RNA sequence: GGGAACGACUCGAGUAGAGUCGAAAAGAAGCGUCGCGGCAGUCCCGUGACGCAACAUCCACGGUCAGCGGUAGUACCUCGGUCGGCGGGGAGUUGCGUCGGGAGACUAGGCGGGCUUUGCCGUGGGCCCCGUAUCAACGUUCGCGUUGGUACGGGGAAAAGAAACAACAACAACAAC
Reactivity to 2A3 in 0.01 (KOAc 150mM, MgCl2 10mM, bicine 150mM(pH8.5), 24C), signal-to-noise 6, nucleotides 027 to 126: g070a020a010g040c040g130u090c000g030c010g060g040c050a010g040u070c000c000c000g030u050g010a000c000g000c000a000a000c000a050u000c000c000a010c020g000g030u050c040a050g020c020g050g000u040a040g030u100a090c000c010u020c020g030g010u020c000g010g040c100g050g020g010g010a180g020u010u020g010c010g000u000c000g020g050g010a180g010a030c050u060a030g090g050c000g020g000g010c020u080u030u050g020c000c010g010u050g000g040g020
Reactivity to DMS in 0.01 (KOAc 150mM, MgCl2 10mM, bicine 150mM(pH8.5), 24C), signal-to-noise 4, nucleotides 027 to 126: g010a040a030g010c020g010u030c000g010c010g010g000c130a070g020u020c060c000c000g010u010g000a010c010g000c010a000a010c020a120u010c000c010a050c020g010g000u010c110a100g050c170g010g000u010a110g010u030a300c010c010u010c050g000g000u000c020g010g000c070g000g010g020g000a070g010u000u000g000c020g010u000c000g010g000g010a070g000a030c020u000a070g040g000c000g000g000g010c010u020u000u010g020c010c000g020u030g000g000g000